[RMDB]
RNA sequence: GGGAACGACUCGAGUAGAGUCGAAAAGAUUAGGCAGAUAACAACUAUUACCCGUCUUGCCACUGUAUUGUAAAGUAAACAACAAGAUAUAAGUUUAAUACACCUACGCGACAAGAUGAAUCAGCAAGUAGCCUAAUAGGUUCGCCUAUUAGGCUACAAAAGAAACAACAACAACAAC
Reactivity to DMS in 0.01 (KOAc 150mM, MgCl2 10mM, bicine 150mM(pH8.5), 24C), signal-to-noise 2, nucleotides 027 to 126: g020a070u000u000a040g000g020c090a100g010a120u010a070a140c120a080a060c050u010a040u010u000a060c020c040c020g020u000c010u010u010g010c030c010a040c070u010g010u000a020u030u010g000u010a010a080a090g000u000a040a020a020c010a060a080c140a040a100g010a090u000a100u030a070a110g000u020u000u000a000a070u000a030c030a010c120c080u000a040c020g000c000g020a020c050a000a000g000a020u000g020a070a100u000c070a070g010c120a020a120
Reactivity to 2A3 in 0.01 (KOAc 150mM, MgCl2 10mM, bicine 150mM(pH8.5), 24C), signal-to-noise 1, nucleotides 027 to 126: g040a020u110u160a010g030g030c100a020g080a190u150a180a130c070a060a060c020u030a020u090u130a090c000c000c000g000u020c000u030u050g000c020c000a010c100u130g040u010a030u090u000g080u020a030a130a120g070u040a000a050a080c010a100a000c030a130a030g060a130u080a040u070a270a090g010u020u020u040a100a040u030a020c010a020c040c010u020a000c040g000c000g020a040c020a040a000g010a060u060g030a080a110u020c010a010g020c020a000a150
Chemical mapping of a 177-nucleotide RNA with DMS and 2A3. Reactivities are given for positions 27 through 126. The data come from the RNA Mapping Database (RMDB), library M2PK90. 2A3 adducts were read by reverse transcription with SuperScript II with manganese. The DMS profile rests on 1,533 reads. The reactions ran in a buffer of 150 mM KOAc, 10 mM MgCl2 and 150 mM bicine (pH 8.5), at 24 C.